Source: RMDB library OK1LIB, as collected in RNAgym. An RNA of 177 nucleotides, treated with DMS and 2A3 and read out base by base. DMS adducts were read by reverse transcription with MarathonRT. Values cover nucleotides 27 to 126. Conditions: 150 mM KOAc, 10 mM MgCl2 and 150 mM bicine (pH 8.5), 24 C.
RNA sequence: GGGAACGACUCGAGUAGAGUCGAAAACUCUCAGCUGAAAUUGCGAGCAGGAGGAAUCCUGAGAUAGGUGUGCAGAACCGAAACUGGUAUGGUAAGUUUGCGCACAUUCUGAGCAUCAGUUAGGCCGUCAUGCUUAGUAUUUCGAUACUAAGCAUGAAAAAGAAACAACAACAACAAC
Reactivity to DMS in 0.01 (KOAc 150mM, MgCl2 10mM, bicine 150mM(pH8.5), 24C), signal-to-noise 9, nucleotides 027 to 126: c100u010c010u010c040a070g000c010u000g000a060a060a090u030u010g010c000g000a080g010c000a020g000g010a020g000g100a120a130u000c010c000u000g010a060g010a060u030a050g010g010u000g010u000g000c010a290g010a040a030c040c040g010a070a120a130c070u010g000g020u030a070u020g000g010u000a200a140g000u000u000u000g010c070g000c010a020c020a060u000u020c010u000g010a160g010c030a070u000c030a020g010u000u010a070g010g010c060c100g010
Reactivity to 2A3 in 0.01 (KOAc 150mM, MgCl2 10mM, bicine 150mM(pH8.5), 24C), signal-to-noise 9, nucleotides 027 to 126: c020u010c000u010c010a010g000c010u010g030a040a100a140u180u110g000c020g010a020g040c010a000g010g020a010g020g150a050a110u030c000c000u010g000a010g020a040u190a040g100g000u010g000u010g000c010a020g050a120a030c020c020g040a100a060a040c060u140g150g120u300a180u230g080g010u050a080a050g030u010u020u020g070c080g020c020a000c000a010u200u050c020u030g030a020g020c000a020u020c000a000g010u030u070a070g050g030c060c040g070